[RMDB]
RNA sequence: GGGAACGACUCGAGUAGAGUCGAAAACAAGUUCGUGCUUGCGACUUACACGUAGGGCGAGGGGUGGGCGAAAGUUGCCAUGAGACCGUAACUUUCGUAGUCAUUGAUAAAGGGGCAGGUGUCGCUCAAAAGACGUUGGUCUUCGGACCAACGUCAAGCUGUUUUUAACAUUCGUGUUAAAAACAGCAAAAGAAACAACAACAACAAC
Reactivity to 2A3 in 0.01 (KOAc 150mM, MgCl2 10mM, bicine 150mM(pH8.5), 24C), signal-to-noise 2, nucleotides 027 to 156: c030a030a020g050u080u110c060g040u150g060c040u070u110g000c030g080a080c040u080u110a040c090a020c070g070u050a060g040g030g010c110g050a120g040g030g010g010u200g020g000g020c010g000a000a000a010g010u030u010g000c020c040a060u110g070a040g020a120c020c030g020u000a000a010c000u000u000u030c020g000u010a040g050u020c030a110u000u200g080a050u130a130a060a030g010g010g020g000c060a030g010g080u080g010u030c040g020c040u050c030a050a090a010a010g000a000c000g000u000u000g010g010u020c010u040u020c180g040g000a010c010c000a000a000c000g000u000c000a010a010